[RMDB]
RNA sequence: GGGAACGACUCGAGUAGAGUCGAAAAUGAGUGCGCCGAGGCCACUGCGCUGUACUCGUACCAUGGCCUGGCCGAUCGUACGUACCGUACUGGCCGUACGGCCAGUGGCCGGCCAUCGGCCGUCGCGCCUCAAAGCAGUUUUCGAACUGCUUUGAGGAAAAGAAACAACAACAACAAC
Reactivity to 2A3 in 0.01 (KOAc 150mM, MgCl2 10mM, bicine 150mM(pH8.5), 24C), signal-to-noise 2, nucleotides 027 to 126: u100g020a030g130u080g000c100g000c040c030g010a100g000g050c030c000a030c050u030g010c030g000c080u020g040u050a030c030u040c120g020u060a090c010c030a090u120g030g000c020c090u020g020g010c050c010g040a060u100c040g020u070a090c030g020u040a150c010c070g020u070a050c060u150g020g030c030c010g020u080a020c050g010g000c000c000a000g030u020g020g040c010c000g010g030c010c010a040u050c010g000g020c020c010g070u080c040g010c050g020
Reactivity to DMS in 0.01 (KOAc 150mM, MgCl2 10mM, bicine 150mM(pH8.5), 24C), signal-to-noise 4, nucleotides 027 to 126: u010g010a050g010u000g000c070g010c060c030g000a180g020g010c020c010a030c050u000g000c100g030c040u010g020u010a030c040u000c140g020u000a110c100c100a100u010g000g030c030c030u000g040g010c050c000g000a030u000c110g010u000a060c070g010u020a070c060c040g010u010a030c060u010g000g030c250c020g000u000a020c040g000g000c020c000a020g000u000g000g030c130c010g010g000c070c060a080u000c060g010g020c050c000g020u010c090g000c140g020
The data come from the RNA Mapping Database (RMDB), library OK2TRN. This 177-nucleotide RNA was probed chemically with 2A3 and DMS. For 2A3, 3,326 sequencing reads were counted. As a SHAPE reagent, 2A3 marks flexible, mostly unpaired nucleotides at the ribose 2'-OH. DMS adducts were read by reverse transcription with MarathonRT.